[RMDB]
RNA sequence: GGGAACGACUCGAGUAGAGUCGAAAAGAAAGAAAGAAAGCGGUUGGGUGGGUCUAUCGACCGUCGUGGCGUAUUCGGACGCUUUACCACGACGCGAGGAAAUAGCGAGACCGACCACCCCCUUUAACAGAGGUAUAGUAGUUCGCUACUAUACCAACACAAUGCGUGACUUCGGUCACGCAUUGUGAAAAGAAACAACAACAACAAC
Reactivity to 2A3 in 0.01 (KOAc 150mM, MgCl2 10mM, bicine 150mM(pH8.5), 24C), signal-to-noise 1, nucleotides 027 to 156: g030a050a020a010g100a060a010a020g080a060a020a000g290c210g010g060u130u110g100g070g020u040g120g000g000u000c000u000a110u040c010g080a110c010c000g010u000c000g000u000g020g000c060g000u080a130u000u130c070g050g000a020c020g020c000u030u140u150a020c030c050a000c030g000a030c000g000c030g020a000g030g110a110a160a000u130a080g010c020g000a000g010a030c000c040g050a000c010c010a000c030c000c000c000c000u000u080u060a130a170c250a010g070a080g130g000u000a000u000a000g000u000a000g000u020u020c270g000c110u020a000c020u000a000u000a000c000c000a000a000
Chemical mapping of a 207-nucleotide RNA with 2A3. The RNA was probed in 150 mM KOAc, 10 mM MgCl2 and 150 mM bicine (pH 8.5) at 24 C. For 2A3, 475 sequencing reads were counted. For 2A3 the reverse transcriptase was SuperScript II with manganese.